[RMDB]
RNA sequence: GGGAACGACUCGAGUAGAGUCGAAAAUAGGUUGAAUUCGUUCAACCUACAGGCAAGCAUGCAGCGCAACGAGACAAGGCGAUAAUAAGAUAGCGCAUGCUGAUACAUCGGUCUUCGGACCGAUGAAGAGGGACCGUAUAUUCGUAUACGGUCCCUCAAAAGAAACAACAACAACAAC
Reactivity to 2A3 in 0.01 (KOAc 150mM, MgCl2 10mM, bicine 150mM(pH8.5), 24C), signal-to-noise 1, nucleotides 027 to 126: u050a010g020g000u010u020g000a010a000u050u070c160g050u080u030c020a000a010c000c010u010a040c020a000g050g090c020a040a010g000c000a000u010g000c040a040g050c090g000c020a070a100c060g050a010g060a210c090a160a060g160g050c000g090a030u030a160a100u140a020a170g140a180u220a080g000c020g060c010a010u000g040c020u040g000a030u050a120c020a000u000c000g000g000u010c000u000u030c160g090g000a000c000c000g020a010u000g000a020a060
Reactivity to DMS in 0.01 (KOAc 150mM, MgCl2 10mM, bicine 150mM(pH8.5), 24C), signal-to-noise 1, nucleotides 027 to 126: u000a010g000g030u000u020g000a020a010u000u000c240g020u000u000c010a000a000c000c000u000a030c120a090g010g050c040a060a070g020c000a030u000g030c000a160g000c090g040c140a040a100c200g020a060g020a100c270a060a280g020g000c070g010a030u010a080a080u000a060a100g000a070u000a050g030c010g000c000a030u000g000c060u010g000a070u010a070c010a000u000c030g010g020u000c000u000u000c170g000g020a000c000c020g000a000u000g030a070a050